[RMDB]
RNA sequence: GGGAACGACUCGAGUAGAGUCGAAAAAGACGUGUACGCACGUCACACCGUGGCGGCGGUGUAAAACAAACAUUUAGCCGCCAGCGUCCCGGAACAAGGCAUUUUCCGAUUCUCCGGGGGUUGCAAAAAAACUGAACUUGGUUCGCCAAGUUCAGAACCUUAUUUCCUUCUUCGGAAGGAAAUAAGGAAAAGAAACAACAACAACAAC
Reactivity to DMS in 0.01 (KOAc 150mM, MgCl2 10mM, bicine 150mM(pH8.5), 24C), signal-to-noise 1, nucleotides 027 to 156: a050g010a000c010g050u010g000u000a020c180g140c030a010c000g000u020c020a110c020a060c140c040g000u000g020g080c000g000g090c020g000g000u000g020u010a010a030a180a170c260a280a130a060c060a080u000u000u000a300g000c020c010g020c000c000a040g020c020g010u020c000c020c020g000g020a060a080c090a140a030g000g020c100a120u000u010u030u000c000c020g010a250u000u000c000u000c040c000g000g000g040g020g010u000u000g000c020a010a030a070a020a120a170a100c000u000g000a010a030c000u000u000g000g000u000u010c300g020c070c020a010a020g000u000u010c020a000g000a030a050
Reactivity to 2A3 in 0.01 (KOAc 150mM, MgCl2 10mM, bicine 150mM(pH8.5), 24C), signal-to-noise 1, nucleotides 027 to 156: a000g020a000c020g000u020g020u010a030c220g040c100a000c000g000u000c010a000c010a010c000c020g060u040g000g000c000g030g010c000g020g000u020g010u030a130a190a040a020c110a030a100a010c010a030u020u080u080a020g000c000c000g000c000c000a000g000c020g060u040c010c000c010g020g000a050a050c060a080a050g110g000c100a100u030u120u130u000c030c010g070a100u180u010c040u010c020c000g000g000g000g000g040u190u140g000c020a040a010a000a000a000a020a190c000u000g000a000a000c000u000u000g020g030u030u000c040g000c060c000a000a000g000u000u010c000a000g000a000a000
The record gives the reactivity of an RNA of 207 nucleotides to DMS and 2A3.
The reactions ran in a buffer of 150 mM KOAc, 10 mM MgCl2 and 150 mM bicine (pH 8.5), at 24 C.